[RMDB]
RNA sequence: GGGAACGACUCGAGUAGAGUCGAAAAGAAUGGAUGACUUGUUAAGUUGCUCCUGUUUUAAAUCAUGGUCAGAAUUCACAGAAUGCAUUAGCGAGUUAAUCAUGUCAAUGGCGGAGUAUGUCACAGAUAAUUUAGCUCCCUUCGGGGAGCUAAAUUAAAAAGAAACAACAACAACAAC
Reactivity to DMS in 0.01 (KOAc 150mM, MgCl2 10mM, bicine 150mM(pH8.5), 24C), signal-to-noise 1, nucleotides 027 to 126: g000a070a110u000g020g010a130u000g000a020c030u000u000g000u010u010a060a060g020u010u010g010c040u010c060c010u000g080u000u000u000u000a020a110a090u010c050a070u010g030g040u020c160a060g010a070a060u000u000c170a020c040a030g000a060a020u000g020c030a030u000u010a070g000c010g020a040g020u000u030a030a100u000c070a030u000g010u000c080a110a110u000g010g020c030g030g020a120g020u010a060u020g000u010c050a040c150a080g000a140
Conditions: 150 mM KOAc, 10 mM MgCl2 and 150 mM bicine (pH 8.5), 24 C.
The record gives the reactivity of an RNA of 177 nucleotides to DMS.
Values cover nucleotides 27 to 126.
The data come from the RNA Mapping Database (RMDB), library OK2TST.
DMS (dimethyl sulfate) methylates the pairing face of unpaired adenines and cytosines.